Source: RMDB library OK2TST, as collected in RNAgym. Structure probing data (DMS) for a 177-nucleotide construct. Values cover nucleotides 27 to 126. Conditions: 150 mM KOAc, 10 mM MgCl2 and 150 mM bicine (pH 8.5), 24 C.

[RMDB]
RNA sequence: GGGAACGACUCGAGUAGAGUCGAAAAAUUAACCAAAAUCCGUCAGGGAUUGUUGACGUUACUGCAAAGUACCCGCGAUACCGUUCCUACCGCGCUUUCUCCGCAUGGAUUAAUCGCGCAUCAGUUCUCAAUUUGAUUGCUUCGGCAAUCAAAUUGAAAAAGAAACAACAACAACAAC
Reactivity to DMS in 0.01 (KOAc 150mM, MgCl2 10mM, bicine 150mM(pH8.5), 24C), signal-to-noise 1, nucleotides 027 to 126: a100u000u000a050a170c030c030a100a030a060a040u000c040c030g000u000c270a170g000g010g000a030u000u000g020u000u010g000a110c140g000u000u020a040c070u000g050c120a060a030a070g010u000a080c050c060c010g040c040g000a080u000a030c060c010g000u000u000c050c000u000a120c210c060g000c020g000c060u000u000u000c040u000c000c000g020c210a080u000g010g010a040u000u000a060a030u000c070g010c030g000c160a070u010c120a110g010u000u000c090